[RMDB]
RNA sequence: GGGAACGACUCGAGUAGAGUCGAAAACUGUCACCACCAUUGGCCGCAACAUGUUGCUGGCUACGCGAGAGUACGUGCAUGCGCGCUGGACGACAAUGCCCAGCGUCGUGGCAGACUUUCCAGAGGCGGGCAUUGCGUAGUUCGCUACGCAAUGCCCAAAAGAAACAACAACAACAAC
Reactivity to DMS in 0.01 (KOAc 150mM, MgCl2 10mM, bicine 150mM(pH8.5), 24C), signal-to-noise 1, nucleotides 027 to 126: c070u000g010u000c080a070c030c060a070c070c010a110u000u020g020g030c070c070g020c000a020a060c110a100u030g000u000u020g030c000u070g110g000c000u000a010c270g000c080g000a150g000a110g000u020a090c200g000u000g030c030a080u000g000c060g010c010g000c010u020g030g020a050c070g000a250c250a070a240u000g010c070c020c000a000g030c070g000u000c010g020u000g000g000c080a170g070a050c190u000u000u000c000c070a110g000a100g070g000c130
Reactivity to 2A3 in 0.01 (KOAc 150mM, MgCl2 10mM, bicine 150mM(pH8.5), 24C), signal-to-noise 1, nucleotides 027 to 126: c000u020g040u010c010a020c080c000a000c030c040a100u090u130g040g000c020c000g010c060a040a020c100a240u190g020u120u020g020c140u140g000g000c000u040a010c100g020c120g020a040g000a010g140u120a120c170g010u030g090c080a060u060g000c020g040c050g000c040u000g000g040a040c070g000a040c160a120a170u300g010c000c000c000a000g000c010g020u070c060g000u040g000g000c030a000g000a060c000u000u030u000c000c030a040g040a050g200g050c040